[RMDB]
RNA sequence: GGGAACGACUCGAGUAGAGUCGAAAAGGAGAUGCCAUGCCGACCCGAAGAGGAAAGAAGGACGCGAGACACGAACCCGUGAGUGGAAACCCGCUUUAUUCACUGGGGUCGACAACUCUGGGGAGAACACAUCAUACGUGUUCGCACGUAUGAUGUGAAAAGAAACAACAACAACAAC
Reactivity to 2A3 in 0.01 (KOAc 150mM, MgCl2 10mM, bicine 150mM(pH8.5), 24C), signal-to-noise 1, nucleotides 027 to 126: g050g000a040g030a010u090g040c030c020a040u120g000c000c020g060a070c040c000c020g000a040a000g030a030g050g000a070a070a040g090a030a020g030g000a000c000g010c040g030a040g010a020c050a000c040g050a070a080c000c010c010g060u040g000a000g000u000g020g020a060a050a040c010c010c020g080c090u150u230u090a270u120u140c070a090c170u110g000g000g030g000u000c010g010a030c020a110a090c030u020c030u040g000g000g020g000a110g030a060a000
Reactivity to DMS in 0.01 (KOAc 150mM, MgCl2 10mM, bicine 150mM(pH8.5), 24C), signal-to-noise 2, nucleotides 027 to 126: g010g030a100g000a070u000g030c060c060a040u020g060c030c020g010a070c040c050c000g000a050a080g000a130g000g000a030a110a060g010a080a070g000g000a040c090g010c080g020a040g020a050c140a080c040g000a090a110c020c030c020g020u000g000a020g010u000g000g000a040a130a090c020c010c000g010c140u010u020u020a080u010u020c090a100c050u020g030g010g000g000u000c020g000a220c150a050a020c010u000c010u000g000g010g020g010a150g020a030a140